[RMDB]
RNA sequence: GGGAACGACUCGAGUAGAGUCGAAAACAGGGAUAGGUCGAGCUUGAGUUGCGAGCCGGGGGGAUCGGCCCGUCAUCAACGUCAAAGCCAAUAAUAACUGGCAAACAAAACAACAAUUUAGCUUUCGCUGCCUAAUAGCAGUCUGAAUAGCUGAUCCGUUCCCUAUAUUCUUCGGAAUAUAGGGAACAAAAGAAACAACAACAACAAC
Reactivity to 2A3 in 0.01 (KOAc 150mM, MgCl2 10mM, bicine 150mM(pH8.5), 24C), signal-to-noise 6, nucleotides 027 to 156: c030a010g040g000g060a060u080a070g030g050u070c040g010a030g030c020u060u060g060a080g070u070u080g070c040g000a020g020c030c040g020g010g000g000g000g020a030u050c020g030g000c000c020c000g030u050c020a110u070c020a030a040c030g080u040c060a050a060a010g010c020c010a030a010u170a140a020u080a050a060c070u050g030g000c000a010a100a030c060a030a100a050a010c070a030a030c010a040a020u060u110u110a040g000c000u000u020u010c000g000c010u000g000c010c010u140a110a050u120a110g000c010a000g010u030c100u110g020a030a040u050a190g000c000u010g010a030u060c070c060
Reactivity to DMS in 0.01 (KOAc 150mM, MgCl2 10mM, bicine 150mM(pH8.5), 24C), signal-to-noise 1, nucleotides 027 to 156: c020a110g010g020g000a160u010a010g020g000u010c070g020a080g000c100u010u010g030a180g020u000u000g000c060g010a180g020c000c030g000g010g000g060g130g000a020u020c020g030g000c020c000c000g030u010c080a030u010c050a060a070c050g020u000c050a070a110a100g020c020c000a010a100u000a140a210u010a120a090c110u000g040g030c020a130a060a300c050a090a070a100a070c080a040a070c080a050a100u000u000u000a050g000c000u000u020u020c020g010c000u000g000c000c020u000a100a110u000a070g000c000a000g000u000c100u010g000a030a050u010a000g030c010u000g010a050u020c060c080
An RNA of 207 nucleotides, treated with 2A3 and DMS and read out base by base. DMS adducts were read by reverse transcription with MarathonRT. Source: RMDB library ARCHII, as collected in RNAgym. Values cover nucleotides 27 to 156. Conditions: 150 mM KOAc, 10 mM MgCl2 and 150 mM bicine (pH 8.5), 24 C. For 2A3 the reverse transcriptase was SuperScript II with manganese. The 2A3 profile rests on 5,332 reads.